[RMDB]
RNA sequence: GGGAACGACUCGAGUAGAGUCGAAAACUGAACUACAUCCGUAACUCGGUGGUGAACUUCGCCCCCGGCGAGUCCUCGUCGUACUCGAACGCAGCCUCGUGGCUGCUGGGCAAGGUCCUGGAGUCCGUCUACAACGACGGCCGGACGGUCGAUCAGAAUGAAGAUAGAUCUUCGGAUCUAUCUUCAUAAAAGAAACAACAACAACAAC
Reactivity to 2A3 in 0.01 (KOAc 150mM, MgCl2 10mM, bicine 150mM(pH8.5), 24C), signal-to-noise 2, nucleotides 027 to 156: c020u020g060a060a000c000u080a060c070a080u040c040c010g010u050a090a080c050u040c080g080g000u080g000g040u100g050a120a060c030u080u090c100g040c000c000c000c000c000g010g000c020g000a020g070u080c040c060u100c070g100u050c020g000u050a040c000u020c080g050a100a030c090g000c000a000g000c010c010u240c260g140u200g060g000c030u010g000c000u020g000g010g000c030a100a010g090g020u030c020c050u070g030g000a050g040u050c000c010g000u030c040u080a100c070a180a030c110g020a000c000g000g000c010c000g000g010a040c030g010g040u030c050g010a130u020c020a000g160a180
Reactivity to DMS in 0.01 (KOAc 150mM, MgCl2 10mM, bicine 150mM(pH8.5), 24C), signal-to-noise 2, nucleotides 027 to 156: c020u010g020a030a160c030u000a110c020a300u000c040c010g020u000a100a150c050u010c030g040g020u030g040g000u000g030a060a070c030u000u000c090g010c000c020c060c050c030g080g090c040g020a050g010u000c060c020u020c230g020u010c030g040u000a040c020u000c020g010a100a120c060g000c010a040g050c040c020u000c230g010u000g030g060c000u000g000c020u000g000g010g020c030a060a080g010g010u000c010c010u000g000g010a120g020u020c000c010g010u000c010u010a090c180a080a010c030g000a040c020g020g010c090c010g010g000a060c060g010g020u000c060g010a160u010c040a120g010a230
Conditions: 150 mM KOAc, 10 mM MgCl2 and 150 mM bicine (pH 8.5), 24 C.
Chemical mapping of a 207-nucleotide RNA with 2A3 and DMS.
2A3 adducts were read by reverse transcription with SuperScript II with manganese.
The 2A3 profile rests on 1,359 reads.
The DMS profile rests on 3,559 reads.